[RMDB]
RNA sequence: GGGAACGACUCGAGUAGAGUCGAAAAGAAAGAAAGAAAGAAGGCCUGUGAUGAAUUGCUUUAAUUUCUGACACCUCGUAUGAAAACUGCACGUGCAGUCUGAUUAUAUUGCAAGACUGAGGCUUAAAAUAACAUGCGUUUUCGAACGCAUGUUAUUAAAAGAAACAACAACAACAAC
Reactivity to DMS in 0.01 (KOAc 150mM, MgCl2 10mM, bicine 150mM(pH8.5), 24C), signal-to-noise 5, nucleotides 027 to 126: g010a050a070a050g010a080a080a120g000a130a110a120g000a160a110g000g020c040c040u000g020u030g000a090u010g000a070a110u010u010g010c020u000u010u010a040a240u000u000u000c020u010g000a090c130a100c060c040u010c080g000u000a040u020g000a100a040a080a050c060u010g000c010a180c270g000u030g010c030a020g000u000c030u000g010a110u000u010a080u020a040u020u020g000c030a030a040g000a120c030u010g000a030g000g010c030u010u000a020a070
Reactivity to 2A3 in 0.01 (KOAc 150mM, MgCl2 10mM, bicine 150mM(pH8.5), 24C), signal-to-noise 4, nucleotides 027 to 126: g090a020a070a000g120a010a100a000g070a030a120a010g040a030a050g040g000c000c020u050g050u050g130a070u040g030a060a090u050u020g000c010u080u040u070a070a080u070u120u040c010u020g080a050c010a060c050c000u050c020g020u040a040u150g130a020a060a090a110c020u070g010c080a030c110g020u120g010c040a030g030u020c010u000g010a030u020u140a090u060a040u190u200g020c020a030a000g010a030c010u040g020a020g010g000c000u080u030a020a300
Description:
This 177-nucleotide RNA was probed chemically with DMS and 2A3. Reactivities are rounded to 0.1 and cut off at 0 and 3. For 2A3, 2,303 sequencing reads were counted.